Source: RMDB library OK1LIB, as collected in RNAgym.
The record gives the reactivity of an RNA of 177 nucleotides to 2A3 and DMS.
For 2A3 the reverse transcriptase was SuperScript II with manganese.
Values cover nucleotides 27 to 126.
For DMS, 3,788 sequencing reads were counted.

RNA sequence: GGGAACGACUCGAGUAGAGUCGAAAACUUUGCCAGGAUUCGGUACUUUUCCAGCCUUUCACUUCCCGGUAACGCUUGGGACGCGAAACUAUCCUGCCGGCAGCGACGGAACACGCUUCGAGAGGCCGCUCGAAAAAGAUUUCGAUCUUUUUCGAGCAAAAGAAACAACAACAACAAC
Reactivity to 2A3 in 0.01 (KOAc 150mM, MgCl2 10mM, bicine 150mM(pH8.5), 24C), signal-to-noise 5, nucleotides 027 to 126: c020u080u030u110g020c000c020a040g030g050a100u080u060c030g030g030u080a130c040u090u090u050u020c020c000a020g000c010c010u040u090u090c070a100c050u040u030c000c030c000g010g060u080a100a040c040g010c030u060u080g000g000g050a010c010g020c020g080a050a020a030c050u050a040u070c010c000u010g040c030c000g030g000c010a010g010c010g050a030c030g010g030a070a020c070a010c030g040c000u070u100c070g070a080g010a020g070g010c010c020
Reactivity to DMS in 0.01 (KOAc 150mM, MgCl2 10mM, bicine 150mM(pH8.5), 24C), signal-to-noise 3, nucleotides 027 to 126: c060u020u010u000g010c080c040a070g000g000a070u010u020c090g020g000u020a100c050u000u000u020u020c020c030a080g010c060c060u000u030u030c090a080c150u000u000c020c010c040g000g000u010a030a120c150g020c020u000u000g000g000g000a070c050g020c020g000a120a030a090c210u020a120u000c010c030u040g010c020c010g010g020c030a050g000c090g020a080c070g020g000a080a120c070a060c140g020c040u000u000c010g010a100g010a140g000g020c040c080